[RMDB]
RNA sequence: GGGAACGACUCGAGUAGAGUCGAAAAUCGCCCCAGGACAUCCGCGACACCCUCGCUGCCAUCCAAGAGGAGGUCGAUCUGUCAGAGCUAUUCAUGGGCCUGCUGCCGGGAGCGGCCGUAUACGGGCCAUGGAAAACACAUUCGUGUGUUUUCCAUGAAAAGAAACAACAACAACAAC
Reactivity to 2A3 in 0.01 (KOAc 150mM, MgCl2 10mM, bicine 150mM(pH8.5), 24C), signal-to-noise 4, nucleotides 027 to 126: u050c030g070c020c000c000c000a040g110g000a010c010a050u040c050c050g030c010g020a010c020a100c030c010c010u020c010g050c040u100g050c030c020a070u060c040c010a080a030g020a030g080g010a010g020g030u010c010g020a060u010c020u050g070u050c020a030g020a030g070c030u070a060u200u160c070a080u150g050g020g030c000c010u070g010c010u010g020c020c000g050g030g000a050g090c020g030g000c000c010g050u070a090u020a090c060g010g000g020c000
Reactivity to DMS in 0.01 (KOAc 150mM, MgCl2 10mM, bicine 150mM(pH8.5), 24C), signal-to-noise 9, nucleotides 027 to 126: u000c120g010c030c010c000c100a140g010g000a060c040a050u000c120c140g010c030g010a050c040a070c050c020c010u000c030g010c130u000g000c050c050a060u010c050c060a110a130g000a060g000g010a100g010g010u000c010g010a060u010c080u010g010u010c050a090g010a110g010c060u000a070u000u000c090a090u010g010g010g010c020c020u000g010c040u000g000c060c020g010g000g010a110g010c060g000g000c010c060g010u000a070u010a100c110g010g000g010c050

An RNA of 177 nucleotides, treated with 2A3 and DMS and read out base by base. For DMS, 15,728 sequencing reads were counted. Source: RMDB library OK2TST, as collected in RNAgym. For DMS the reverse transcriptase was MarathonRT.